[RMDB]
RNA sequence: GGGAACGACUCGAGUAGAGUCGAAAAGAAAGAAAGAUUCUAUGUUGACGGAACCUUUCUACUGUGUGCAAUUAGUGUUAGUUUCAUUCUCAUUGCACACAAUAGUGGGGCUUUAUUACAUAACCAAGCUUCCUGUCGUAUUCGUACGACAGGAAGCAAAAGAAACAACAACAACAAC
Reactivity to 2A3 in 0.01 (KOAc 150mM, MgCl2 10mM, bicine 150mM(pH8.5), 24C), signal-to-noise 3, nucleotides 027 to 126: g060a020a020a020g110a070a120a020g040a030u050u050c020u060a030u110g080u040u050g160a030c130g010g030a060a040c000c000u000u180u090c000u030a000c000u000g000u000g000u000g020c000a010a000u000u000a010g060u000g090u170u070a070g160u100u220u210c100a060u160u110c020u000c000a000u000u000g000c000a000c000a000c000a000a000u000a000g000u010g010g020g000g000c000u100u070u000a100u130u080a020c040a030u080a030a020c060c000a060a030
This 177-nucleotide RNA was probed chemically with 2A3. The 2A3 profile rests on 1,262 reads.